[RMDB]
RNA sequence: GGGAACGACUCGAGUAGAGUCGAAAACCUUCCUCGACUCGGGUUGGCUCAUCCUCGGCGAGGGCGACGGUCCUCAGUUCUCUCUAUUCUUUCUUGAAAGAGGAGACUGCUGGACCAAACGCCCGAGAAACACCGGCGUUCGCGCCGGUGAAAAGAAACAACAACAACAAC
Reactivity to 2A3 in 0.01 (KOAc 150mM, MgCl2 10mM, bicine 150mM(pH8.5), 24C), signal-to-noise 3, nucleotides 027 to 129: c000c030u040u060c000c000u010c020g030a040c010u000c000g000g000g000u000u050g070g020c040u000c020a150u050c030c020u090c020g080g020c090g050a130g000g010g040c000g040a030c140g000g020u000c000c000u000c010a040g000u190u050c020u000c000u000c060u070a300u150u000c020u100u140u080c090u080u130g090a000a000a000g040a010g000g110a010g010a000c000u010g030c170u010g000g010a000c000c000a010a020a000c000g000c000c000c000g000a010g000a030a130a000
Reactivity to DMS in 0.01 (KOAc 150mM, MgCl2 10mM, bicine 150mM(pH8.5), 24C), signal-to-noise 4, nucleotides 027 to 129: c140c090u070u040c030c000u020c000g020a110c030u090c010g010g010g090u020u020g010g010c120u000c050a150u030c020c020u050c120g060g010c000g030a180g020g030g030c040g030a120c300g060g000u000c020c020u000c030a040g010u020u030c090u000c000u070c010u030a140u070u000c010u070u050u050c140u060u010g010a030a020a000g070a050g070g010a000g040a000c000u050g040c190u050g170g000a090c000c010a030a100a030c060g030c000c050c000g010a060g020a100a220a080